RNA sequence: GGGAACGACUCGAGUAGAGUCGAAAACCCUCACUCUUCGGAGUGAGGGAAAUCUGAUUCCCAAUAGCUGGGUAUCCGGGGUAAGACGGAUAGGCGUUGCCAAAAGAUCUGGCUUCGGCCAGAUCAACAAAAAUACGUGCUUCGGCACGUAUUUUUGAAAAGAAACAACAACAACAAC
Reactivity to 2A3 in 0.01 (KOAc 150mM, MgCl2 10mM, bicine 150mM(pH8.5), 24C), signal-to-noise 1, nucleotides 027 to 126: c000c000c010u000c000a010c000u000c000u000u080c230g160g000a000g010u020g000a010g000g000g000a030a100a010u020c090u110g080a200u010u000c050c000c000a020a050u080a020g030c050u040g150g020g050u050a020u000c010c000g040g000g030g090u130a110a040g300a080c010g000g060a050u010a060g040g020c090g270u260u200g010c010c000a020a160a060a100g010a000u010c000u000g000g000c000u030u040c160g060g060c020c020a010g000a000u020c010a000a000
Reactivity to DMS in 0.01 (KOAc 150mM, MgCl2 10mM, bicine 150mM(pH8.5), 24C), signal-to-noise 2, nucleotides 027 to 126: c010c000c000u000c010a000c000u000c000u000u020c130g020g010a010g020u000g010a010g000g010g000a000a030a020u010c180u000g000a220u000u000c010c010c000a140a110u010a100g030c050u000g040g000g010u000a020u000c010c020g000g000g020g000u010a110a140g010a030c010g000g000a010u000a080g000g010c010g000u000u010g020c020c040a070a120a090a070g000a020u000c000u000g000g000c000u000u010c170g020g000c000c010a020g000a000u000c000a060a120
The data come from the RNA Mapping Database (RMDB), library M2PK50. Structure probing data (2A3 and DMS) for a 177-nucleotide construct. For DMS the reverse transcriptase was MarathonRT. Reactivities are given for positions 27 through 126. For 2A3 the reverse transcriptase was SuperScript II with manganese.